[RMDB]
RNA sequence: GGGAACGACUCGAGUAGAGUCGAAAAGGUCGGGACGAUUAUGGGUACAGUCCCGGUCACACAAUGCUGCGUGCAGCUAGCCUGACCCAGAUCUAGAUAAGCACUUUGCACAGAAGGACUUAAUCCAACUGUCUUUGGAGUUCGCUCCAAAGACAGUAAAAGAAACAACAACAACAAC
Reactivity to 2A3 in 0.01 (KOAc 150mM, MgCl2 10mM, bicine 150mM(pH8.5), 24C), signal-to-noise 3, nucleotides 027 to 126: g020g000u020c000g000g000g000a000c010g030a050u110u080a150u240g090g010g000u030a090c010a040g000u000c000c000c000g000g000u000c000a010c000a000c000a010a080u090g000c010u000g010c010g050u030g010c010a020g000c000u010a010g000c000c010u030g010a060c010c000c000a020g000a020u040c030u030a020g030a100u040a090a040g010c020a000c000u050u050u120g090c070a070c020a060g080a060a040g050g000a020c010u050u060a040a020u060c020c010a010
Reactivity to DMS in 0.01 (KOAc 150mM, MgCl2 10mM, bicine 150mM(pH8.5), 24C), signal-to-noise 3, nucleotides 027 to 126: g000g030u000c010g020g010g000a000c000g010a260u010u020a150u010g020g010g040u000a240c120a300g000u000c030c000c000g020g000u000c000a080c100a040c170a080a080u000g010c000u030g010c050g030u070g000c060a040g000c010u000a080g000c000c020u010g000a090c010c010c010a080g000a070u040c120u000a030g000a030u000a020a070g020c210a030c010u000u000u000g000c210a030c060a070g030a070a040g000g000a070c030u010u010a050a070u030c040c070a090
Structure probing data (2A3 and DMS) for a 177-nucleotide construct.
The reactions ran in a buffer of 150 mM KOAc, 10 mM MgCl2 and 150 mM bicine (pH 8.5), at 24 C.
2A3 adducts were read by reverse transcription with SuperScript II with manganese.
It was measured as part of the RMDB library OK1LIB.